[RMDB]
RNA sequence: GGGAACGACUCGAGUAGAGUCGAAAAUAUAAAUAAGAAUUCAGGCCUUUUCCGGACGCACCGCGUGCAAUGCUACGUGCAGCGAUGCACGAAGCUAAAGGCCCGAAGGCUAGCAAAAGCUAGCCAAAUAUAAAUCCCUCUUCGGAGGGAUUUAUAUAAAAGAAACAACAACAACAAC
Reactivity to DMS in 0.01 (KOAc 150mM, MgCl2 10mM, bicine 150mM(pH8.5), 24C), signal-to-noise 1, nucleotides 027 to 126: u050a130u010a080a010a110u010a090a130g010a200a230u030u000c010a020g000g000c000c010u000u010u000u050c140c110g000g020a130c080g000c050a130c130c160g000c040g000u030g020c050a050a020u020g000c060u000a020c010g030u000g000c000a020g000c300g000a150u000g000c000a000c000g000a170a010g000c020u010a010a020a080g000g030c000c000c060g000a000a060g020g010c000u000a000g000c000a110a090a090a120g010c000u000a000g000c000c030a010a040
Reactivity to 2A3 in 0.01 (KOAc 150mM, MgCl2 10mM, bicine 150mM(pH8.5), 24C), signal-to-noise 1, nucleotides 027 to 126: u070a010u080a090a060a080u260a200a040g080a000a030u260u020c090a030g000g010c000c020u000u020u010u030c040c050g000g080a020c020g010c010a080c070c130g000c030g050u090g030c030a110a000u140g050c000u040a070c040g010u020g000c000a000g000c000g000a010u020g000c010a000c000g000a020a000g000c020u010a000a010a010g020g000c000c000c000g080a060a040g000g000c020u000a000g030c020a110a220a240a090g000c000u030a000g000c000c000a000a010